Structure probing data (DMS and 2A3) for a 177-nucleotide construct.
The reactions ran in a buffer of 150 mM KOAc, 10 mM MgCl2 and 150 mM bicine (pH 8.5), at 24 C.
The 2A3 profile rests on 1,486 reads.
2A3 adducts were read by reverse transcription with SuperScript II with manganese.
Source: RMDB library OK1LIB, as collected in RNAgym.

RNA sequence: GGGAACGACUCGAGUAGAGUCGAAAACGUCAGAAGACGAAGUCGGUCCAUCUGCGGUAAGAGACCGACAUAGAGUUCGAAGCAGAACGUACAACCGCAGACACACGAUUGGAGUGUGAAUGAGAGAACUGAUGGUGCGAUUCGUCGCACCAUCAGUAAAAGAAACAACAACAACAAC
Reactivity to DMS in 0.01 (KOAc 150mM, MgCl2 10mM, bicine 150mM(pH8.5), 24C), signal-to-noise 2, nucleotides 027 to 126: c010g000u050c030a090g020a280a130g030a050c040g000a100a100g000u000c000g000g000u000c000c200a190u000c000u000g000c030g000g020u030a070a030g000a190g010a040c010c000g050a030c000a000u020a090g030a120g010u000u010c010g000a160a140g000c130a170g010a000a000c000g070u000a130c200a100a040c000c000g020c000a010g000a300c050a030c020a010c000g000a250u040u040g000g020a190g000u010g000u010g000a060a020u060g010a080g000a100g000a100
Reactivity to 2A3 in 0.01 (KOAc 150mM, MgCl2 10mM, bicine 150mM(pH8.5), 24C), signal-to-noise 2, nucleotides 027 to 126: c050g030u000c000a070g000a300a010g030a240c080g010a100a000g000u000c000g000g000u000c070c000a030u000c010u010g000c000g050g000u080a090a000g030a020g000a090c000c010g000a000c000a000u070a000g040a000g010u000u040c010g030a040a000g120c050a040g020a000a000c000g040u080a050c030a050a000c030c000g000c000a000g020a000c040a000c000a000c000g100a060u050u300g150g010a240g020u010g000u000g000a010a090u070g040a080g030a000g010a090
For DMS the reverse transcriptase was MarathonRT.